Source: RMDB library OK1LIB, as collected in RNAgym. Structure probing data (DMS and 2A3) for a 177-nucleotide construct. For DMS, 4,035 sequencing reads were counted.
RNA sequence: GGGAACGACUCGAGUAGAGUCGAAAAUGGCUUGGAUGGUAACGUAAACACCACAGAAGAGGACACGGAAAGACAUACAGCAGCGGACGUAAAUAAGAACCAGCACACGUUGCUUGGUAUCAGAAUGAUACGCGUGAAAGUUCGCUUUCACGCGUAUAAAAGAAACAACAACAACAAC
Reactivity to DMS in 0.01 (KOAc 150mM, MgCl2 10mM, bicine 150mM(pH8.5), 24C), signal-to-noise 3, nucleotides 027 to 126: u020g010g000c020u030u030g010g030a100u010g000g000u000a070a110c200g020u010a060a090a130c080a130c020c030a050c080a060g010a140a080g020a090g000g000a090c070a040c070g010g040a010a060a050g000a080c080a100u000a060c130a070g000c040a030g000c050g000g000a040c130g000u000a040a030a080u010a060a070g050a030a050c050c010a050g000c050a080c080a120c160g000u000u000g000c090u000u000g010g000u010a070u030c020a120g050a080a060u030g000
Reactivity to 2A3 in 0.01 (KOAc 150mM, MgCl2 10mM, bicine 150mM(pH8.5), 24C), signal-to-noise 3, nucleotides 027 to 126: u070g010g000c040u040u070g000g010a020u020g050g050u050a000a060c080g020u000a020a030a120c140a030c100c000a000c000a080g200a150a030g060a060g030g000a040c020a000c060g030g000a070a100a000g030a000c000a070u130a010c050a050g000c030a000g030c030g030g040a050c040g070u150a050a180a070u200a110a000g030a010a010c000c000a000g000c020a000c000a000c140g180u200u000g000c000u060u140g030g020u080a200u060c000a010g050a090a000u080g040
Conditions: 150 mM KOAc, 10 mM MgCl2 and 150 mM bicine (pH 8.5), 24 C.